The data come from the RNA Mapping Database (RMDB), library OK1LIB.
Chemical mapping of a 177-nucleotide RNA with DMS and 2A3.
As a SHAPE reagent, 2A3 marks flexible, mostly unpaired nucleotides at the ribose 2'-OH.
Reactivities are given for positions 27 through 126.
The RNA was probed in 150 mM KOAc, 10 mM MgCl2 and 150 mM bicine (pH 8.5) at 24 C.
DMS adducts were read by reverse transcription with MarathonRT.
The DMS profile rests on 2,340 reads.
The 2A3 profile rests on 1,892 reads.
[RMDB]
RNA sequence: GGGAACGACUCGAGUAGAGUCGAAAAGAAAGAAAUCAAAGCGGAUUCUAGUCUAAUCGGAGAGACUAGCAAUCGAAUAACUCGUUCUUGAUAUCCGUAUUAGAUCUAACUGAGGGAUGAGUAGAAAGGGUUACAUAGUGUUCGCACUAUGUAACCCAAAAGAAACAACAACAACAAC
Reactivity to DMS in 0.01 (KOAc 150mM, MgCl2 10mM, bicine 150mM(pH8.5), 24C), signal-to-noise 2, nucleotides 027 to 126: g020a060a080a090g010a080a060a090u050c030a120a180a120g000c020g010g000a040u000u000c000u000a000g010u000c000u010a110a260u070c010g000g010a120g000a000g040a010c000u000a020g010c270a000a000u000c010g030a070a120u070a070a070c050u030c000g000u000u020c020u000u010g000a120u040a040u000c000c010g000u020a110u020u020a090g000a120u000c080u010a070a150c150u030g000a110g010g000g000a020u010g000a120g000u000a120g000a140a020a080
Reactivity to 2A3 in 0.01 (KOAc 150mM, MgCl2 10mM, bicine 150mM(pH8.5), 24C), signal-to-noise 2, nucleotides 027 to 126: g080a000a110a020g090a040a040a020u190c120a050a030a050g170c060g060g000a000u020u010c000u000a000g000u000c000u000a050a070u110c070g090g000a030g020a020g000a020c000u000a000g010c040a000a000u000c010g040a010a040u060a070a000c000u010c050g000u070u010c000u040u030g010a040u030a030u000c000c000g000u050a010u060u090a070g090a030u000c060u120a030a130c010u080g080a150g040g000g060a000u030g040a010g020u010a000g050a080a130a050